The data come from the RNA Mapping Database (RMDB), library M2PK50.
The record gives the reactivity of an RNA of 177 nucleotides to DMS and 2A3.
For 2A3, 1,358 sequencing reads were counted.
2A3 adducts were read by reverse transcription with SuperScript II with manganese.
For DMS the reverse transcriptase was MarathonRT.
Conditions: 150 mM KOAc, 10 mM MgCl2 and 150 mM bicine (pH 8.5), 24 C.
For DMS, 790 sequencing reads were counted.
[RMDB]
RNA sequence: GGGAACGACUCGAGUAGAGUCGAAAAGCAGGAGUGUUCGCACUCCUGCAAAUGAAAGGGGCCAGCUCCAGGCCGCCAAACAAUAUGGAGCACAAAGUAAAGAAAGGCCUACGUUCGCGUAGGCCAACUCUUAGGAUCACUUCGGUGAUCCUAAGAGAAAAGAAACAACAACAACAAC
Reactivity to DMS in 0.01 (KOAc 150mM, MgCl2 10mM, bicine 150mM(pH8.5), 24C), signal-to-noise 1, nucleotides 027 to 126: g000c010a000g000g030a010g000u000g000u000u010c270g020c020a000c000u010c000c010u000g000c000a010a030a040u010g000a080a140a220g000g010g020g010c000c000a100g070c000u020c000c020a050g000g050c000c010g020c050c040a060a060a120c130a060a010u000a060u000g020g000a010g000c010a130c180a050a130a160g000u020a050a030a120g010a090a070a150g000g020c010c020u000a000c010g000u000u000c170g020c000g050u010a000g000g000c010c000a000a000
Reactivity to 2A3 in 0.01 (KOAc 150mM, MgCl2 10mM, bicine 150mM(pH8.5), 24C), signal-to-noise 1, nucleotides 027 to 126: g000c000a000g000g000a000g010u000g000u000u130c140g060c080a000c000u010c000c000u010g000c000a000a000a020u080g010a040a000a100g020g000g000g000c000c010a030g000c050u000c000c000a000g000g000c040c000g030c030c020a080a050a000c050a020a030u050a030u050g020g000a000g180c000a000c010a000a000a000g150u220a040a060a080g080a060a110a020g020g010c020c000u000a010c000g020u030u090c260g020c020g040u000a000g000g000c000c000a000a000